[RMDB]
RNA sequence: GGGAACGACUCGAGUAGAGUCGAAAACAAAACUAGCUUUGCCAAGGAAGAUGUAGUAGUGGUUUUCAUUCAUUCAUUCUUCUUUCAUUCAAGAAACAGAUAUUGACAACCUGCUGUUUGACACAUGGUAUAACAACUUCCAUUGAAAAUGGAGUAACGUAAAAUCGUCAUUCGUGACGAUUUUACGAAAAGAAACAACAACAACAAC
Reactivity to 2A3 in 0.01 (KOAc 150mM, MgCl2 10mM, bicine 150mM(pH8.5), 24C), signal-to-noise 7, nucleotides 027 to 156: c020a000a080a020a020c060u110a030g070c030u090u100u110g030c030c010a030a030g020g010a040a020g030a050u080g010u090a050g030u040a020g030u060g080g040u120u130u110u120c050a040u020u030c010a010u060u030c020a030u100u000c020u040u010c000u040u080u060c060a150u080u110c070a080a020g040a080a060a020c050a030g050a030u100a060u130u200g040a050c040a060a020c020c010u050g010c010u020g060u090u070u100g050a020c020a010c010a110u070g020g040u080a080u080a150a020c040a010a010c010u150u020c000c010a040u050u120g170a120a120a010a010u010g000g010a010g030u040a050a010
Reactivity to DMS in 0.01 (KOAc 150mM, MgCl2 10mM, bicine 150mM(pH8.5), 24C), signal-to-noise 2, nucleotides 027 to 156: c040a050a090a100a090c040u000a110g040c060u000u000u010g020c020c040a080a210g000g000a050a070g020a050u010g010u010a120g000u000a030g040u000g020g000u000u010u000u000c080a100u020u000c110a110u000u000c050a070u000u000c010u000u000c030u000u000u010c120a170u000u000c130a090a020g040a120a070a090c100a080g000a080u000a120u020u000g010a090c070a040a080c100c020u000g010c010u000g010u000u010u010g020a250c090a050c080a100u000g000g000u010a130u000a060a100c070a060a090c030u000u010c010c010a070u000u010g010a080a070a110a040u000g010g010a120g030u010a040a140
The record gives the reactivity of an RNA of 207 nucleotides to 2A3 and DMS. It was measured as part of the RMDB library OK3TST. 2A3 adducts were read by reverse transcription with SuperScript II with manganese. Conditions: 150 mM KOAc, 10 mM MgCl2 and 150 mM bicine (pH 8.5), 24 C.